[RMDB]
RNA sequence: GGGAACGACUCGAGUAGAGUCGAAAAUUGCCGAUUGUGAAAUAGUUCCAUUUGACGCAUGUUGGUAUACCUCUGCGAUUGAAUCUGGCGGAAAAUAUGAUGCUAUUUGGCUAAAUGAAGCAAUGAACGUACCUGCACUAUUCGUAGUGCAGGUACGAAAAGAAACAACAACAACAAC
Reactivity to DMS in 0.01 (KOAc 150mM, MgCl2 10mM, bicine 150mM(pH8.5), 24C), signal-to-noise 2, nucleotides 027 to 126: u000u010g010c000c000g010a160u000u000g030u010g000a060a060a070u000a050g010u000u000c010c050a080u010u000u010g020a130c070g000c010a010u030g010u010u000g000g020u000a080u020a070c070c030u000c030u000g010c090g030a170u000u010g000a060a160u000c060u000g000g020c110g000g000a070a050a060a050u020a050u010g030a080u020g000c030u000a030u000u000u010g010g000c070u000a040a070a050u020g000a110a130g000c060a030a030u010g010a050a200
Reactivity to 2A3 in 0.01 (KOAc 150mM, MgCl2 10mM, bicine 150mM(pH8.5), 24C), signal-to-noise 2, nucleotides 027 to 126: u050u050g020c010c000g070a080u050u080g040u000g160a020a050a050u050a030g030u040u050c020c000a020u000u010u070g040a000c000g000c010a010u170g060u070u050g130g000u130a070u110a120c000c000u010c020u050g010c000g230a260u000u060g040a030a030u050c060u120g040g050c030g010g050a040a090a020a010u230a060u170g070a050u120g000c010u020a080u070u050u120g100g000c030u060a060a010a140u100g000a050a020g000c010a000a040u060g040a100a000